[RMDB]
Annotation:
This 177-nucleotide RNA was probed chemically with 2A3 and DMS. The 2A3 profile rests on 2,010 reads. It was measured as part of the RMDB library OK1LIB.

RNA sequence: GGGAACGACUCGAGUAGAGUCGAAAAGAGGAAUGGUGCUGUAGGGAAUGCACAAUGCCCCCACUAUCGUUUCGAGCAAAAGACGGCUGCUGGUAUGGAAUGGAGAUAAGGCCCAGGAAAGAACCAGAGGUUGCUAGUAUUUCGAUACUAGCAACCUAAAAGAAACAACAACAACAAC
Reactivity to 2A3 in 0.01 (KOAc 150mM, MgCl2 10mM, bicine 150mM(pH8.5), 24C), signal-to-noise 3, nucleotides 027 to 126: g090a010g060g040a010a090u110g070g000u030g000c020u070g030u120a060g050g030g050a070a080u240g010c010a000c010a060a050u100g010c000c000c010c030c000a040c030u130a080u150c050g030u000u040u080c030g030a020g000c010a000a070a040a110g100a010c030g040g000c000u040g000c000u000g000g010u040a030u050g050g010a080a050u020g000g070a070g000a020u140a050a090g010g010c020c000c020a000g050g100a090a050a040g060a020a090c010c010a000g020
Reactivity to DMS in 0.01 (KOAc 150mM, MgCl2 10mM, bicine 150mM(pH8.5), 24C), signal-to-noise 2, nucleotides 027 to 126: g040a150g040g020a080a060u000g010g030u000g000c020u010g000u080a160g000g000g000a100a120u020g040c090a070c110a110a070u060g010c070c000c000c000c030a060c130u020a120u060c040g000u030u020u050c080g020a130g000c060a000a010a000a020g020a090c070g000g020c050u000g000c000u010g000g020u030a070u000g000g000a150a080u030g000g000a060g000a060u040a090a030g000g000c090c000c000a060g010g010a050a050a060g010a090a130c060c020a160g010